[RMDB]
Description: The record gives the reactivity of an RNA of 177 nucleotides to 2A3. Reactivities are rounded to 0.1 and cut off at 0 and 3. For 2A3, 368 sequencing reads were counted.
RNA sequence: GGGAACGACUCGAGUAGAGUCGAAAAGCAGGAGUAGUUCCGGUGGGGGCCGACGCGGAGGUGGUGGGUGAUGGAGAGGCUGGCGAGGAGGUGACGUUUGGUUCGGUUGUCUCGCUGGUGGUGGGUGGUGUGCAGAUCGAUUCGUCGAUCUGCACACAAAAGAAACAACAACAACAAC
Reactivity to 2A3 in 0.01 (KOAc 150mM, MgCl2 10mM, bicine 150mM(pH8.5), 24C), signal-to-noise 1, nucleotides 027 to 126: g070c040a010g000g040a010g020u040a000g070u070u000c070c070g020g090u080g150g000g000g000g020c100c040g010a070c030g090c030g050g010a150g020g010u050g010g130u230g000g030g080u080g040a210u020g020g040a030g000a000g090g040c030u080g030g020c100g000a000g030g000a000g000g000u210g010a030c040g110u050u170u300g050g000u100u000c100g000g150u000u050g130u090c000u000c180g000c000u030g000g040u100g020g040u270g030g000g000u090g200